[RMDB]
RNA sequence: GGGAACGACUCGAGUAGAGUCGAAAAAUUCUACCUUAUUUGAUAGUAGAUUUAAAACUUUGCAACAGAACCGUUCAUGGGUAUAGCAUGAAUUGUUUAACUGUCCUCUAGGAUUCCCGUCCUAUGGCAGUCGGUUCGAAACCAUCGUUCGCGAUGGCCAGCGUAUAGUCUUCGGACUAUACGCUGGAAAAGAAACAACAACAACAAC
Reactivity to 2A3 in 0.01 (KOAc 150mM, MgCl2 10mM, bicine 150mM(pH8.5), 24C), signal-to-noise 2, nucleotides 027 to 156: a000u090u000c000u000a010c000c010u150u190a260u250u240u190g060a040u130a060g030u000a010g010a020u070u070u300a050a170a060a050c170u240u220u260g000c010a060a060c010a120g010a000a000c000c010g010u010u000c000a000u020g020g040g220u300a180u080a240g300c000a000u000g000a000a020u040u120g060u070u100u090a000a000c000u020g000u000c000c000u000c000u000a000g020g000a090u040u100c000c020c000g000u010c020c000u030a030u030g010g000c000a000g010u020c010g000g000u000u030c010g010a020a000a090c000c000a000u000c000g040u100u100c150g020c010g170a000u010g000g000